Record summary: Chemical mapping of a 177-nucleotide RNA with 2A3 and DMS. For DMS the reverse transcriptase was MarathonRT. DMS (dimethyl sulfate) methylates the pairing face of unpaired adenines and cytosines. The data come from the RNA Mapping Database (RMDB), libraries RFM100 and RFMREP.
[RMDB]
RNA sequence: GGGAACGACUCGAGUAGAGUCGAAAACGAGGCGAAGGCGAUGUUCUUGUAGGCAUUCGGUGAUCAAGGACGAAGGCUGGAGUAUCGAAAGUGAUUAGAUACCGCAGUAGUUCCAGCAGUAAAAGAUUCGUAUAUCCGCAUUCGUGCGGAUAUACGAAAAAGAAACAACAACAACAAC
Reactivity to 2A3 in 0.01 (KOAc 150mM, MgCl2 10mM, bicine 150mM(pH8.5), 24C), signal-to-noise 2, nucleotides 027 to 126: c060g020a000g110g070c050g030a070a000g040g000c010g000a020u070g020u070u000c030u000u150g010u000a040g090g050c050a090u120u050c120g200g030u060g020a070u070c030a000a140g040g000a020c070g000a010a070g100g000c000u040g000g000a000g000u030a010u010c020g110a140a000a000g120u170g020a040u010u040a060g020a060u040a010c010c000g000c030a050g010u070a010g050u050u030c000c000a020g020c030a000g100u180a010a020a040a010g170a040u000
Reactivity to DMS in 0.01 (KOAc 150mM, MgCl2 10mM, bicine 150mM(pH8.5), 24C), signal-to-noise 2, nucleotides 027 to 126: c040g000a100g010g010c020g000a220a100g000g000c070g020a060u000g000u000u000c050u020u000g020u010a070g000g050c070a070u020u000c180g000g010u010g020a030u050c100a020a120g000g000a110c040g000a130a090g010g000c020u000g010g010a140g000u020a000u010c000g000a040a060a080g020u010g000a090u030u000a210g030a050u020a050c040c040g020c120a030g000u000a030g000u000u000c000c020a030g020c090a130g030u000a040a050a080a060g000a120u040